[RMDB]
RNA sequence: GGGAACGACUCGAGUAGAGUCGAAAAUCUUACGGUUAGACGCAAUAGCUUGUGUCUUUAUACUAUUUUUUUCUACAAGACAUUGUUCAUAUGAAGCUUUGGCAACAUUUCUUACCGAUGUUUUGUCCACCUAUAGUGCUUUCGAGCACUAUAGGUGAAAAGAAACAACAACAACAAC
Reactivity to DMS in 0.01 (KOAc 150mM, MgCl2 10mM, bicine 150mM(pH8.5), 24C), signal-to-noise 2, nucleotides 027 to 126: u000c020u030u000a040c190g020g000u010u000a030g000a000c160g030c040a070a030u030a200g020c260u000u000g000u000g000u000c010u020u020u040a050u030a080c090u000a000u010u000u010u000u020u000u000c020u020a060c030a050a010g000a020c010a010u000u000g000u010u040c160a080u000a030u010g000a010a300g010c020u010u020u060g010g000c060a010a190c010a030u030u040u020c090u000u010a080c200c030g010a030u000g000u000u000u010u000g000u000c260
Reactivity to 2A3 in 0.01 (KOAc 150mM, MgCl2 10mM, bicine 150mM(pH8.5), 24C), signal-to-noise 9, nucleotides 027 to 126: u040c020u050u100a050c040g000g020u040u070a010g000a000c020g000c030a030a090u060a200g100c100u020u020g000u000g010u000c000u010u100u040a120u030a020c040u020a260u080u090u010u010u000u050u050c030u050a040c030a030a010g010a010c000a020u010u070g070u120u140c080a070u130a090u280g080a040a010g010c020u080u180u190g110g000c040a060a030c020a160u080u090u040c030u040u060a030c020c030g070a050u030g030u010u020u010u030g050u020c020
The record gives the reactivity of an RNA of 177 nucleotides to DMS and 2A3. Conditions: 150 mM KOAc, 10 mM MgCl2 and 150 mM bicine (pH 8.5), 24 C. Reactivities are given for positions 27 through 126.